[RMDB]
RNA sequence: GGGAACGACUCGAGUAGAGUCGAAAACGUACGUGGAGACACGUACGACGAGACUUCGGUCUCGAAUUGCAAGAACUUGGGCCUUGCGCGCGCGAGGCGUCGGUUCUCGGCGAGCGGACGGACGCAAAAACUCGCGCGUAAAUAAAUAGCUUAAGAAGGGUCAUAAAAUGUUCGCAUUUUAUGACCCAAAAGAAACAACAACAACAAC
Reactivity to 2A3 in 0.01 (KOAc 150mM, MgCl2 10mM, bicine 150mM(pH8.5), 24C), signal-to-noise 2, nucleotides 027 to 156: c010g000u000a000c000g000u000g010g040a000g020a050c000a000c000g000u000a000c000g000a010c000g000a000g000a000c010u060u210c260g080g010u040c010u010c010g010a070a180u190u140g000c000a020a030g020a170a090c000u040u020g010g000g000c000c020u000u020g000c000g010c000g010c000g010c000g010a060g010g030c010g000u000c010g160g020u040u000c060u010c010g110g070c270g020a030g000c020g020g000a000c020g030g000a000c000g000c030a030a170a060a060a100c010u010c010g000c000g000c000g010u000a000a000a000u000a000a020a010u150a010g010c000u000u000a000a000g030a020a090

Chemical mapping of a 207-nucleotide RNA with 2A3. Reactivities are given for positions 27 through 156. It was measured as part of the RMDB library OK3TST. Conditions: 150 mM KOAc, 10 mM MgCl2 and 150 mM bicine (pH 8.5), 24 C.